[RMDB]
RNA sequence: GGGAACGACUCGAGUAGAGUCGAAAAUGAACUCCUGGUGCAGGCCGUUGAGCUGCUCUUCCAGGACCUUGUAGCGCGCCUGCAACUCGCUGCGCUCGGCGGCCAGGUCGGCCUGGGCGGCGGCGUACAGCUAGUAGUGAUUCGUCACUACUAGCUGAAAAGAAACAACAACAACAAC
Reactivity to DMS in 0.01 (KOAc 150mM, MgCl2 10mM, bicine 150mM(pH8.5), 24C), signal-to-noise 7, nucleotides 027 to 126: u010g010a130a150c160u000c010c010u010g000g010u000g020c010a020g000g010c010c040g020u000u010g000a110g020c090u010g000c070u000c070u000u010c150c130a110g010g010a040c110c050u000u000g020u000a060g010c020g010c150g000c010c000u010g000c020a050a100c100u000c040g020c070u000g010c020g000c010u010c020g020g010c110g010g010c030c040a070g000g010u010c150g010g010c020c000u010g020g000g010c040g010g040c020g010g010c010g020u000a080
Reactivity to 2A3 in 0.01 (KOAc 150mM, MgCl2 10mM, bicine 150mM(pH8.5), 24C), signal-to-noise 5, nucleotides 027 to 126: u110g020a030a040c050u020c020c010u030g050g050u060g000c010a020g010g020c020c020g080u130u150g060a060g030c070u060g030c060u080c020u180u080c050c040a060g000g040a030c000c000u050u080g160u140a030g020c020g010c030g000c040c000u010g010c000a020a050c030u030c030g030c020u020g010c010g000c020u040c040g160g090c110g030g030c060c010a050g040g170u160c060g050g080c000c020u050g010g000g010c020g060g060c010g020g000c000g010u040a050

Annotation: The record gives the reactivity of an RNA of 177 nucleotides to DMS and 2A3. The RNA was probed in 150 mM KOAc, 10 mM MgCl2 and 150 mM bicine (pH 8.5) at 24 C. The 2A3 profile rests on 9,533 reads. Values cover nucleotides 27 to 126. For DMS, 13,649 sequencing reads were counted. The data come from the RNA Mapping Database (RMDB), library OK2TST.